Chemical mapping of a 177-nucleotide RNA with 2A3 and DMS. 2A3 adducts were read by reverse transcription with SuperScript II with manganese. Values cover nucleotides 27 to 126. For DMS, 1,653 sequencing reads were counted. Conditions: 150 mM KOAc, 10 mM MgCl2 and 150 mM bicine (pH 8.5), 24 C. It was measured as part of the RMDB library OK2TRN.
RNA sequence: GGGAACGACUCGAGUAGAGUCGAAAAGAGGAUGAGCAAAAGCCUUUGAAACAUGAACUGGUGUUAGACUGUCCUAAGAACCCUGGCCAUGAUUGUCGCGCCUGUGCUUUCCAUAGAGCUACCAGCGGUACCGUAGGUCUUUCGAGACCUACGGUACAAAAGAAACAACAACAACAAC
Reactivity to 2A3 in 0.01 (KOAc 150mM, MgCl2 10mM, bicine 150mM(pH8.5), 24C), signal-to-noise 2, nucleotides 027 to 126: g070a010g030g000a000u100g130a070g090c050a040a050a130a050g030c030c030u120u110u160g120a130a100a000c030a040u070g030a090a040c040u040g000g000u070g070u140u040a000g030a040c040u060g070u100c010c060u040a040a050g060a070a060c010c000c010u010g080g000c000c000a030u010g010a100u040u140g000u050c020g000c000g050c040c010u040g030u060g000c000u030u050u090c000c000a060u070a080g060a010g050c060u150a100c030c000a050g060c020g020
Reactivity to DMS in 0.01 (KOAc 150mM, MgCl2 10mM, bicine 150mM(pH8.5), 24C), signal-to-noise 2, nucleotides 027 to 126: g010a110g000g010a080u000g000a050g030c100a070a090a110a150g020c030c040u010u020u000g020a160a100a050c100a070u000g000a120a090c090u000g000g010u000g030u010u010a050g000a140c080u000g000u000c030c030u000a050a090g020a100a120c020c020c030u010g010g020c020c040a040u000g000a060u000u000g020u000c070g010c110g050c010c020u000g030u010g000c070u000u000u000c030c050a080u000a060g000a090g010c030u000a110c050c030a040g000c120g020